[RMDB]
RNA sequence: GGGAACGACUCGAGUAGAGUCGAAAAGGAAACCGGUCGAGGCCCGGAAGGGAGCAGACUCACUGUGGGCAACCGUCGCUUGCGGGGUCGCGGGGUGGAGAAGAGAUUCCAGUCUACUGAAAUCUCCCAGAUACAACGACCUGCGGUGUGCUCAUCACAAGUGUAAAUGGUUCGCCAUUUACACUUGAAAAGAAACAACAACAACAAC
Reactivity to DMS in 0.01 (KOAc 150mM, MgCl2 10mM, bicine 150mM(pH8.5), 24C), signal-to-noise 1, nucleotides 027 to 156: g030g000a060a050a160c000c000g070g060u010c000g030a190g010g020c130c000c040g060g010a080a180g010g020g000a080g040c050a280g010a060c020u000c050a030c040u000g040u010g000g000g010c060a060a100c010c020g040u000c060g040c040u000u020g030c090g020g020g020g030u010c020g040c030g010g000g020g020u000g000g020a300g000a180a110g000a050g010a020u010u010c000c000a060g010u010c130u000a120c020u010g010a020a010a050u000c000u010c000c020c060a180g000a240u020a070c020a070a050c000g010a020c030c010u000g020c040g000g010u000g030u000g060c030u010c040a060u000c080a210
Reactivity to 2A3 in 0.01 (KOAc 150mM, MgCl2 10mM, bicine 150mM(pH8.5), 24C), signal-to-noise 3, nucleotides 027 to 156: g050g000a070a080a030c070c060g040g000u040c020g010a060g000g060c000c050c030g030g110a050a110g040g000g000a030g000c040a010g030a030c000u020c010a050c030u060g000u010g000g010g000c000a010a000c000c000g040u080c040g010c240u090u250g050c060g050g010g000g020u020c010g000c050g000g030g020g030u080g030g010a090g020a150a010g030a030g000a010u030u070c060c010a030g070u060c100u180a300c000u140g010a030a070a010u000c000u000c030c000c000a040g030a080u160a100c050a060a010c050g010a010c000c020u030g020c010g020g000u070g080u020g000c010u000c000a030u090c010a020

About this RNA
Chemical mapping of a 207-nucleotide RNA with DMS and 2A3. DMS adducts were read by reverse transcription with MarathonRT. For DMS, 2,238 sequencing reads were counted.